This 177-nucleotide RNA was probed chemically with 2A3 and DMS. The RNA was probed in 150 mM KOAc, 10 mM MgCl2 and 150 mM bicine (pH 8.5) at 24 C. Source: RMDB library M2PK50, as collected in RNAgym. Values cover nucleotides 27 to 126.
[RMDB]
RNA sequence: GGGAACGACUCGAGUAGAGUCGAAAAGCUUAGCAGUUCGCUGCUAAGCGACGUUGACGGCCCUCACCGUUGUCAAAUCCCAAUGAGGACAGGUGACUGACAGAUAUUAAGCGUUCGCGCUUAAUAAUUCCAUCAUGUUGUUCGCAACAUGAUGGAAAAAAGAAACAACAACAACAAC
Reactivity to 2A3 in 0.01 (KOAc 150mM, MgCl2 10mM, bicine 150mM(pH8.5), 24C), signal-to-noise 1, nucleotides 027 to 126: g000c000u000u020a020g000c020a010g010u060u140c190g060c080u000g010c000u010a000a010g000c020g000a010c040g110u040u210g030a000c000g010g000c000c000c000u000c030a030c000c000g030u010u090g040u030c030a070a030a120u040c000c000c000a010a100u060g020a030g030g020a030c020a030g030g030u070g030a050c040u030g030a020c030a060g130a060u040a010u100u000a010a010g000c050g000u010u010c150g060c000g000c050u000u010a010a010u000a000a020
Reactivity to DMS in 0.01 (KOAc 150mM, MgCl2 10mM, bicine 150mM(pH8.5), 24C), signal-to-noise 3, nucleotides 027 to 126: g010c010u000u020a010g010c000a010g020u010u010c230g030c000u000g000c000u000a000a000g010c000g000a000c120g020u000u010g010a030c020g010g000c060c010c010u010c010a120c040c050g000u000u000g010u000c040a080a120a130u000c000c010c010a160a080u010g000a040g000g000a250c100a030g010g000u010g000a110c130u000g000a120c150a070g000a200u010a000u000u000a000a010g000c000g020u010u010c260g030c020g040c010u000u020a000a000u000a030a140